Notes: Structure probing data (2A3 and DMS) for a 207-nucleotide construct. Values cover nucleotides 27 to 156. For 2A3 the reverse transcriptase was SuperScript II with manganese. The RNA was probed in 150 mM KOAc, 10 mM MgCl2 and 150 mM bicine (pH 8.5) at 24 C.

[RMDB]
RNA sequence: GGGAACGACUCGAGUAGAGUCGAAAAUGGCGGUAAUUUUUUCAAAUCAUGAUCUGUGUAAAACACGGUAUUAUUUUAUGAUAUUAGAAUCCUCAGAGAAGAUCCAAUACUUAAGAAAUGUAGUAUUAAUUGCAGGAGGGCACCUGAAAGGAAGCAGACCAUACAAAUAUUUCGAUAUUUGUAUGGUAAAAGAAACAACAACAACAAC
Reactivity to 2A3 in 0.01 (KOAc 150mM, MgCl2 10mM, bicine 150mM(pH8.5), 24C), signal-to-noise 2, nucleotides 027 to 156: u060g030g010c050g000g030u090a100a200u030u070u060u040u050u120c040a120a130a040u030c020a020u020g080a030u020c010u000g050u000g030u110a040a080a060a080c010a020c030g020g020u110a090u110u110a110u020u130u090u050a040u030g010a010u000a110u090u150a010g000a030a050u040c010c010u000c040a010g030a010g010a100a030g010a020u020c020c010a080a050u030a120c030u050u100a110a010g050a090a130a030u100g000u010a020g020u010a050u110u040a120a060u080u100g000c000a010g010g010a000g010g000g010c010a020c030c000u010g050a070a050a010g030g020a020a000g070c140a040g050
Reactivity to DMS in 0.01 (KOAc 150mM, MgCl2 10mM, bicine 150mM(pH8.5), 24C), signal-to-noise 1, nucleotides 027 to 156: u000g000g010c040g030g000u000a050a010u010u010u130u040u010u010c030a060a070a150u000c070a040u000g000a000u010c020u100g050u000g020u030a010a050a000a300c000a040c010g030g000u000a070u000u000a100u000u030u000u000a080u030g000a080u010a100u000u000a080g000a040a030u000c000c000u000c060a200g000a150g000a060a030g000a030u000c010c010a050a010u010a030c030u020u000a060a060g010a030a020a130u000g000u000a000g010u000a030u000u000a120a090u000u000g000c000a040g040g020a070g000g000g040c030a010c030c050u010g010a060a070a060g010g000a160a100g000c030a100g020